Chemical mapping of a 177-nucleotide RNA with 2A3 and DMS. Values cover nucleotides 27 to 126. The DMS profile rests on 4,937 reads. The reactions ran in a buffer of 150 mM KOAc, 10 mM MgCl2 and 150 mM bicine (pH 8.5), at 24 C.

[RMDB]
RNA sequence: GGGAACGACUCGAGUAGAGUCGAAAAGACCGUCAGUUAGACGGAAGAAGUGCAUAAAUCCACAGCGGAAGACCAGAUAGUGCACAAAUGUGGAUAAGCGUACGGAUCUACGUGCGCUAAACGUGAGCAUCCCAGCUAGUUUCGACUAGCUGGGAUGAAAAGAAACAACAACAACAAC
Reactivity to 2A3 in 0.01 (KOAc 150mM, MgCl2 10mM, bicine 150mM(pH8.5), 24C), signal-to-noise 3, nucleotides 027 to 126: g040a000c010c000g000u000c000a060g060u040u300a050g000a000c010g050g020a010a000g100a020a010g030u100g000c020a050u060a200a210a050u040c000c000a030c000a010g040c060g100g060a140a040g080a120c020c000a010g020a080u160a020g100u070g050c050a030c000a050a190a000u160g000u000g000g050a020u040a100a030g000c000g000u010a000c020g000g050a080u070c050u130a110c010g000u000g010c000g000c000u030a010a000a000c060g090u050g060a050g060
Reactivity to DMS in 0.01 (KOAc 150mM, MgCl2 10mM, bicine 150mM(pH8.5), 24C), signal-to-noise 3, nucleotides 027 to 126: g000a090c000c010g000u000c000a220g020u010u060a060g010a050c000g000g010a090a060g040a100a100g010u000g000c020a060u010a100a110a070u000c000c020a040c080a140g020c160g000g010a040a010g010a290c040c040a100g000a100u040a070g030u010g000c000a040c020a060a070a020u020g010u000g000g000a110u030a050a040g000c020g010u010a000c010g000g000a150u100c220u040a080c000g050u010g020c000g000c000u000a010a010a100c150g000u010g010a090g000